[RMDB]
RNA sequence: GGGAACGACUCGAGUAGAGUCGAAAAGGAUGGUAUCCCAGCGUUCUGCAUUGAGUGCAUGGAGGAGGUAAAAAUCGAUAUGGUCGGUGCCGAGCUUUGCAAGCUGUUCAGAGAGGAGCCGAUCCCAGGGAAGCACUUCAUUCGUGAAGUGCUUCCCAAAAGAAACAACAACAACAAC
Reactivity to 2A3 in 0.01 (KOAc 150mM, MgCl2 10mM, bicine 150mM(pH8.5), 24C), signal-to-noise 1, nucleotides 027 to 126: g050g040a020u060g070g010u060a130u040c010c060c100a000g120c060g090u150u090c000u000g040c090a020u070u150g020a030g020u050g070c030a030u050g020g000a060g000g000a000g000g010u060a170a170a000a000a000u010c010g000a050u000a130u200g230g000u000c000g010g000u000g090c020c020g000a000g000c020u040u060u090g000c030a010a010g050c060u070g030u270u130c080a000g000a000g000a040g110g000a060g030c000c000g000a080u070c000c030c000a040
This 177-nucleotide RNA was probed chemically with 2A3. For 2A3 the reverse transcriptase was SuperScript II with manganese.